An RNA of 177 nucleotides, treated with DMS and read out base by base. For DMS, 990 sequencing reads were counted. DMS adducts were read by reverse transcription with MarathonRT.
[RMDB]
RNA sequence: GGGAACGACUCGAGUAGAGUCGAAAAGAUAUGGAGGAGUGCGAUAAGCUGCUAUCGGAAACGAUAGGCAGCUUUUGACGCACCACUCCUAAGUCAAAACGGCGACUUAGUUCGCUAAGUCGCCGAAGAUUUCCUCCUGGUUCGCCAGGAGGAAAUCAAAAGAAACAACAACAACAAC
Reactivity to DMS in 0.01 (KOAc 150mM, MgCl2 10mM, bicine 150mM(pH8.5), 24C), signal-to-noise 1, nucleotides 027 to 126: g020a030u000a180u000g000g000a000g050g000a300g020u010g020c000g040a120u010a050a050g030c000u000g000c000u000a000u010c010g030g000a070a060a060c020g000a000u000a050g020g020c010a000g000c000u000u020u000u010g000a140c010g000c010a000c000c300a110c000u010c000c000u000a020a150g000u000c020a070a050a110a220c040g000g020c000g000a020c000u000u000a010g000u000u010c210g020c000u000a020a000g000u000c000g030c000c000g000a000a010